Notes
Conditions: 150 mM KOAc, 10 mM MgCl2 and 150 mM bicine (pH 8.5), 24 C. Structure probing data (DMS and 2A3) for a 177-nucleotide construct.
RNA sequence: GGGAACGACUCGAGUAGAGUCGAAAAGAAAGGUAUCCGUGUCCUGACAACAUUCCCCGCAAACAUGACAUGGGUUAAUUUAAACAUGUUUUGUUUGCUUGGGAAUGCUCUUAGGGCCUGGAAGCAAAGUACCAAGUGUUUUCGAACACUUGGUACUAAAAGAAACAACAACAACAAC
Reactivity to DMS in 0.01 (KOAc 150mM, MgCl2 10mM, bicine 150mM(pH8.5), 24C), signal-to-noise 5, nucleotides 027 to 126: g000a060a060a090g010g010u020a080u000c000c010g020u000g000u000c010c010u000g000a020c110a040a080c010a010u000u000c010c000c010c300g000c020a020a000a010c000a000u010g010a000c000a000u000g000g020g020u020u020a090a100u030u040u010a040a060a110c000a010u000g000u000u000u010u000g010u000u000u010g000c000u000u030g030g010g000a010a000u000g000c030u010c300u000u000a010g000g020g000c000c030u000g000g010a020a300g010c060a050a050
Reactivity to 2A3 in 0.01 (KOAc 150mM, MgCl2 10mM, bicine 150mM(pH8.5), 24C), signal-to-noise 6, nucleotides 027 to 126: g150a020a090a010g160g040u190a130u020c010c010g010u030g010u030c010c000u010g000a020c060a140a010c000a030u000u000c000c000c000c000g000c000a000a000a000c000a000u010g020a000c000a000u020g100g020g030u070u140a170a240u160u160u220a040a060a020c000a000u000g000u000u010u010u000g000u000u000u000g010c000u010u060g000g000g000a000a000u000g000c010u010c020u010u030a000g000g000g000c010c010u010g000g030a020a010g060c070a060a130
For 2A3 the reverse transcriptase was SuperScript II with manganese. For DMS the reverse transcriptase was MarathonRT.